Chemical mapping of a 177-nucleotide RNA with 2A3. It was measured as part of the RMDB library RFM100. For 2A3, 771 sequencing reads were counted.

RNA sequence: GGGAACGACUCGAGUAGAGUCGAAAAAGCGGAGGACUACGGUCCUCCGCAAUGUCCCUGAUUUGGAGUGCAGAGUGGCCUGUUAACUACAGACCAGGUCUUUCUACAUCUCCAAAACAGGGCCCAACUGAGGUGUUCAGUUCGCUGAACACCUCAGAAAAGAAACAACAACAACAAC
Reactivity to 2A3 in 0.01 (KOAc 150mM, MgCl2 10mM, bicine 150mM(pH8.5), 24C), signal-to-noise 1, nucleotides 027 to 126: a000g020c000g030g010a000g000g000a000c010u020a020c300g050g000u000c000c000u050c000c000g040c000a020a020u000g010u010c000c000c000u020g040a110u000u000u000g000g000a000g010u020g000c040a000g000a000g010u010g020g030c020c000u020g060u120u100a150a050c010u120a130c090a090g130a050c060c000a000g000g000u030c000u020u050u000c000u040a000c010a050u110c030u040c000c060a000a000a000a000c000a000g000g000g000c000c000c000a060a050